[RMDB]
Chemical mapping of a 177-nucleotide RNA with 2A3 and DMS.
RNA sequence: GGGAACGACUCGAGUAGAGUCGAAAACAACAGGGAGGUUGGUGGUGGACGAGGCACUCGCCAACCGGGUCAGGUCCGGAAGGAAGCAGCCCUAACGAGCCAGGCACGGGUCGCCGUGCCAGUACAAUAAGUAUAUCCAGUUCGCUGGAUAUACUUAAAAAGAAACAACAACAACAAC
Reactivity to 2A3 in 0.01 (KOAc 150mM, MgCl2 10mM, bicine 150mM(pH8.5), 24C), signal-to-noise 4, nucleotides 027 to 126: c010a000a010c030a040g040g060g030a060g060g000u020u040g000g010u020g010g030u020g010g060a090c070g040a100g080g070c010a000c020u110c020g000c000c000a000a010c010c000g000g000g000u040c010a000g000g030u010c010c010g060g090a070a050g030g000a020a000g000c020a000g010c000c000c000u060a080a030c070g040a020g060c030c040a050g010g000c000a000c010g030g000g120u190c100g050c150c000g000u000g000c000c000a000g010u040a010c020a020a160
Reactivity to DMS in 0.01 (KOAc 150mM, MgCl2 10mM, bicine 150mM(pH8.5), 24C), signal-to-noise 9, nucleotides 027 to 126: c060a090a110c120a090g010g000g020a120g020g010u000u000g010g030u000g000g030u000g000g000a100c110g010a100g000g000c030a050c020u010c040g020c000c010a020a070c020c020g010g000g000u000c030a300g000g010u000c010c020g020g030a090a140g000g000a030a030g000c030a210g010c010c010c010u010a080a110c130g010a100g010c050c040a140g000g000c010a010c000g000g000g010u010c300g010c010c000g010u000g010c000c010a060g010u010a060c180a080a120
Source: RMDB library M2PK90, as collected in RNAgym. The reactions ran in a buffer of 150 mM KOAc, 10 mM MgCl2 and 150 mM bicine (pH 8.5), at 24 C.